[RMDB]
Overview:
Structure probing data (2A3 and DMS) for a 207-nucleotide construct. The 2A3 profile rests on 2,793 reads. Values are in units of 0.01, from 0 to 300, in steps of 10. For DMS the reverse transcriptase was MarathonRT. Conditions: 150 mM KOAc, 10 mM MgCl2 and 150 mM bicine (pH 8.5), 24 C. Source: RMDB library PDB130, as collected in RNAgym. The DMS profile rests on 2,227 reads.
RNA sequence: GGGAACGACUCGAGUAGAGUCGAAAAAUGAAUGAUGUAACGAUACAACAGCUGUCUCUAUGAUUGACUCAGUGAAAUUGGAAUAACUGUGCAGAUACAGUUUACCUCUAGUUAGACGAGAAGACCCUAUGCAGCUUUACUGUUACUAAUUAUUGAACCAACGUGUUAACUUCGGUUAACACGUUGGAAAAGAAACAACAACAACAAC
Reactivity to 2A3 in 0.01 (KOAc 150mM, MgCl2 10mM, bicine 150mM(pH8.5), 24C), signal-to-noise 4, nucleotides 027 to 156: a000u180g040a040a030u090g030a030u130g020u020a000a000c010g050a090u080a160c120a110a010c030a100g000c000u010g020u020c010u000c020u040a050u070g050a090u050u060g010a040c020u000c070a010g030u030g140a080a050a030u040u030g010g010a050a030u050a050a010c000u000g010u060g060c130a050g060a190u160a140c000a000g000u000u010u020a030c000c020u000c020u020a010g050u040u060a090g020a100c020g000a000g020a080a020g030a030c000c040c010u030a030u090g010c000a000g000c000u080u030u050a060c040u060g000u010u000a010c010u050a070a040u090u100a050u060u140g050a030a040
Reactivity to DMS in 0.01 (KOAc 150mM, MgCl2 10mM, bicine 150mM(pH8.5), 24C), signal-to-noise 2, nucleotides 027 to 156: a090u000g010a130a130u000g000a160u020g010u010a030a030c040g000a110u010a020c160a090a180c200a090g060c020u000g020u000c060u010c110u020a030u010g010a050u000u000g000a300c030u000c030a150g060u000g010a050a030a020u010u000g040g020a090a090u010a010a040c000u000g010u030g020c020a220g000a180u020a070c040a030g000u000u000u000a080c060c060u000c010u000a050g020u000u010a120g000a210c120g000a040g030a030a300g000a050c030c000c060u010a070u010g000c030a010g000c000u010u000u000a060c030u020g020u010u000a050c020u000a070a060u000u000a080u000u010g010a060a280